[RMDB]
RNA sequence: GGGAACGACUCGAGUAGAGUCGAAAAAUGACGGUGACGAGGUAGACCCGGAAAACCUCUCUCGAAAGCUCGCGAUCUACACGGUCAUCACGGCCAAGGAAUCGGAACCGGACAGACCAAACCACGAAAUCGCCGAUUUCGUGCCGUACAGCGCCGAAACAUGAGACGAUUUCGAUCGUCUCAUGUUAAAAGAAACAACAACAACAAC
Reactivity to DMS in 0.01 (KOAc 150mM, MgCl2 10mM, bicine 150mM(pH8.5), 24C), signal-to-noise 1, nucleotides 027 to 156: a080u000g000a090c040g010g020u000g030a200c030g030a050g010g020u000a150g010a240c040c000c010g000g000a080a170a120a070c050c000u050c020u000c040u020c020g000a170a110a100g000c010u000c080g080c060g000a030u000c030u000a090c110a130c040g020g020u000c050a210u000c140a160c010g000g000c020c050a030a260g000g010a030a040u040c000g020g000a090a040c040c000g030g010a260c030a080g010a110c020c110a080a110a180c040c030a000c000g000a010a020a100u000c050g000c110c050g000a300u000u010u000c000g020u000g000c000c040g060u020a090c050a030g030c070g040c000c040g010a240
Reactivity to 2A3 in 0.01 (KOAc 150mM, MgCl2 10mM, bicine 150mM(pH8.5), 24C), signal-to-noise 2, nucleotides 027 to 156: a030u150g030a020c030g030g040u080g010a030c020g020a030g000g030u050a010g070a090c020c000c040g040g010a040a080a030a020c000c000u010c000u000c010u020c010g050a030a040a000g020c030u030c050g050c050g020a030u160c020u210a040c100a060c090g020g040u020c020a040u100c050a040c030g010g010c020c040a100a210g060g020a030a030u050c050g000g000a010a030c020c010g010g020a020c050a060g050a010c090c050a060a090a050c060c020a060c090g060a060a040a090u130c130g090c130c130g000a000u000u000u000c010g050u100g000c030c010g000u040a050c020a040g050c050g000c030c020g030a080
An RNA of 207 nucleotides, treated with DMS and 2A3 and read out base by base. For 2A3, 1,352 sequencing reads were counted. Values cover nucleotides 27 to 156. The DMS profile rests on 1,626 reads. The reactions ran in a buffer of 150 mM KOAc, 10 mM MgCl2 and 150 mM bicine (pH 8.5), at 24 C. It was measured as part of the RMDB library OK3TST. For DMS the reverse transcriptase was MarathonRT.